This 207-nucleotide RNA was probed chemically with 2A3.
Values are in units of 0.01, from 0 to 300, in steps of 10.
The RNA was probed in 150 mM KOAc, 10 mM MgCl2 and 150 mM bicine (pH 8.5) at 24 C.
It was measured as part of the RMDB library VIROID.
Reactivities are given for positions 27 through 156.
RNA sequence: GGGAACGACUCGAGUAGAGUCGAAAAAGAGGGCCGCGGUGCUCUGGAGUAGAGGCUCUGUCUUCGAAACACCAUCGCAUCGGUCCCUUCUUCUUUACCUUCCUUCGGCUCUUCGAGUGAGACGCGACCGGUGGCACCCCUCCUGGGUAGCGACUCCGUGUUGGAGAAUGUUCGCAUUCUCCAACACAAAAGAAACAACAACAACAAC
Reactivity to 2A3 in 0.01 (KOAc 150mM, MgCl2 10mM, bicine 150mM(pH8.5), 24C), signal-to-noise 1, nucleotides 027 to 156: a000g010a020g000g010g000c000c020g000c000g000g000u000g000c010u000c010u020g010g000a000g000u000a000g000a020g020g000c070u170c300u300g150u190c030u080u000c000g000a020a010a010c010a070c240c000a010u020c000g000c010a050u090c050g000g100u090c030c000c000u090u060c010u070u000c000u000u180u150a210c030c000u180u250c010c080u000u020c010g000g010c010u010c000u020u010c010g010a010g030u030g010a040g000a040c020g010c000g020a040c010c010g010g010u020g030g000c070a100c010c060c040c000u110c010c020u170g050g000g000u020a030g010c010g010a030c000u000c070c060